[RMDB]
Conditions: 150 mM KOAc, 10 mM MgCl2 and 150 mM bicine (pH 8.5), 24 C. Structure probing data (DMS and 2A3) for a 177-nucleotide construct. For 2A3, 1,096 sequencing reads were counted. It was measured as part of the RMDB library M2PK50. 2A3 adducts were read by reverse transcription with SuperScript II with manganese. For DMS the reverse transcriptase was MarathonRT. Values are in units of 0.01, from 0 to 300, in steps of 10.
RNA sequence: GGGAACGACUCGAGUAGAGUCGAAAAUAUCCUGCGUUCGCGCAGGAUACAGCACAAAACUCGGAGGGCGCGCACUCGGAGACAAAACAAAAAGCGUAGCAAGUGAGCUUAGAUUCGUCUAAGCUAAUCUCUAAACUGACUUCGGUCAGUUUAGAGAAAAAGAAACAACAACAACAAC
Reactivity to DMS in 0.01 (KOAc 150mM, MgCl2 10mM, bicine 150mM(pH8.5), 24C), signal-to-noise 1, nucleotides 027 to 126: u000a010u000c000c000u010g000c010g010u000u000c270g040c000g000c000a000g000g000a000u000a000c040a040g000c070a070c160a100a100a050a200c020u000c030g040g020a020g010g000g020c000g000c020g020c000a060c000u000c010g000g000a030g010a050c180a030a050a070a110c160a040a030a050a040a150g000c010g010u000a060g000c030a120a120g020u000g000a000g000c000u010u020a000g010a000u000u010c250g000u000c000u000a000a000g000c000u000a000a030
Reactivity to 2A3 in 0.01 (KOAc 150mM, MgCl2 10mM, bicine 150mM(pH8.5), 24C), signal-to-noise 1, nucleotides 027 to 126: u020a000u000c000c010u000g020c010g030u030u020c250g000c030g000c090a000g010g000a010u020a000c010a000g040c060a040c030a110a230a150a050c020u010c010g050g000a020g020g090g010c000g000c000g040c080a120c020u040c000g030g000a010g040a030c070a020a040a010a000c110a010a060a010a020a000g050c010g040u090a060g030c030a010a120g110u150g200a010g000c000u040u000a010g000a030u010u060c170g020u010c090u000a010a010g000c000u030a010a100